[RMDB]
RNA sequence: GGGAACGACUCGAGUAGAGUCGAAAAAUAGCGAAUCGAUGUGCUUCAUCACGCAGCUGCUGAAUAAGGUACAACCCUUGAGAAUUUCGUGGAAGAAUCAAUGGGUCUUCUUCGCCAGGUAACCAUAUUUCCUCUAAGCGUUUAGCAAUUCCGAUUACACUCCGCAGGUAUUCGUACCUGCGGAGUGAAAAGAAACAACAACAACAAC
Reactivity to 2A3 in 0.01 (KOAc 150mM, MgCl2 10mM, bicine 150mM(pH8.5), 24C), signal-to-noise 2, nucleotides 027 to 156: a010u090a010g030c030g090a040a110u080c110g020a050u060g010u040g070c050u040u080c020a050u000c010a000c050g010c010a080g020c050u120g000c000u020g000a120a020u070a070a000g040g000u100a060c040a030a060c040c010c010u000u000g060a030g040a160a080u140u130u160c060g000u140g050g090a050a030g020a040a060u070c000a080a130u150g040g000g000u000c000u050u050c010u030u030c030g040c010c000a000g050g060u060a080a030c030c000a000u000a020u160u050u010c000c000u040c040u020a080a070g000c010g030u040u040u160a010g020c030a020a060u140u010c060c020g020a060u160u110a030